[RMDB]
RNA sequence: GGGAACGACUCGAGUAGAGUCGAAAAAUGAAUGGAAGCACGAAAGUCCAGCGCUUCAUGCUUUUCACCUCAAGGAUUCGGUAAAUGAUAAUCAUUUUUAAGUGUGUAGCUGGCUAUUCUGAGGUAACAGGGUAAAUAUCUUCGGAUAUUUACCCUGAAAAGAAACAACAACAACAAC
Reactivity to DMS in 0.01 (KOAc 150mM, MgCl2 10mM, bicine 150mM(pH8.5), 24C), signal-to-noise 4, nucleotides 027 to 126: a060u010g010a100a080u010g000g000a030a030g010c020a020c020g010a070a060a110g010u000c020c050a090g040c060g020c070u000u010c020a070u000g000c020u010u000u000u000c060a070c020c010u000c050a070a090g010g000a030u000u000c090g010g000u000a050a050a080u000g010a130u010a130a140u010c010a020u000u010u010u000u000a050a130g020u010g010u010g000u000a110g010c000u000g010g010c160u000a040u000u000c010u000g000a040g010g010u000a070a120
Reactivity to 2A3 in 0.01 (KOAc 150mM, MgCl2 10mM, bicine 150mM(pH8.5), 24C), signal-to-noise 3, nucleotides 027 to 126: a000u050g070a010a000u100g000g070a030a030g000c020a000c070g050a210a010a010g090u060c020c000a010g040c000g010c100u020u040c010a050u060g000c010u040u130u050u150c070a060c020c000u040c050a080a050g060g000a080u040u050c020g010g000u080a070a080a050u080g070a070u110a250a040u160c030a030u030u050u040u050u240a090a070g010u040g000u020g010u080a030g030c020u020g040g060c000u040a040u060u000c010u000g020a010g040g030u140a040a000
The record gives the reactivity of an RNA of 177 nucleotides to DMS and 2A3. DMS adducts were read by reverse transcription with MarathonRT. Conditions: 150 mM KOAc, 10 mM MgCl2 and 150 mM bicine (pH 8.5), 24 C.